[RMDB]
RNA sequence: GGGAACGACUCGAGUAGAGUCGAAAAUCCCCGGCGAGAGUACAUAUCGACCCGGGGGCUUGCUACCUCGAUGUCGGCUCUCCCCAUCCUGGCCGUGCAGCAGCGGCCAAGGGUGAGGUUGUUCGCCGACUGCAAGCAAGUUCGCUUGCUUGCAGUCAAAAGAAACAACAACAACAAC
Reactivity to 2A3 in 0.01 (KOAc 150mM, MgCl2 10mM, bicine 150mM(pH8.5), 24C), signal-to-noise 2, nucleotides 027 to 126: u000c010c000c000c000g000g000c000g000a040g000a010g030u140a140c090a140u260a080u060c000g000a030c000c010c000g010g000g000g000g020c020u020u060g000c020u010a030c010c020u010c010g060a050u230g000u020c000g000g030c040u040c010u030c010c000c000c000a000u020c000c000u010g000g050c000c000g020u030g050c070a250g010c040a010g000c110g000g000c010c000a000a000g000g000g000u000g010a030g060g000u000u010g000u030u020c020g010c000c000
Reactivity to DMS in 0.01 (KOAc 150mM, MgCl2 10mM, bicine 150mM(pH8.5), 24C), signal-to-noise 3, nucleotides 027 to 126: u000c010c000c010c000g000g000c010g040a300g000a010g020u030a180c220a150u050a180u000c000g000a300c300c000c020g030g050g000g010g020c060u000u000g010c070u000a010c160c060u000c050g000a070u000g010u000c030g020g020c080u030c010u000c020c020c060c000a000u040c000c000u000g000g000c020c000g050u010g000c060a210g020c100a300g020c000g000g020c000c000a010a000g010g000g000u010g010a070g010g000u030u010g010u010u010c070g010c010c000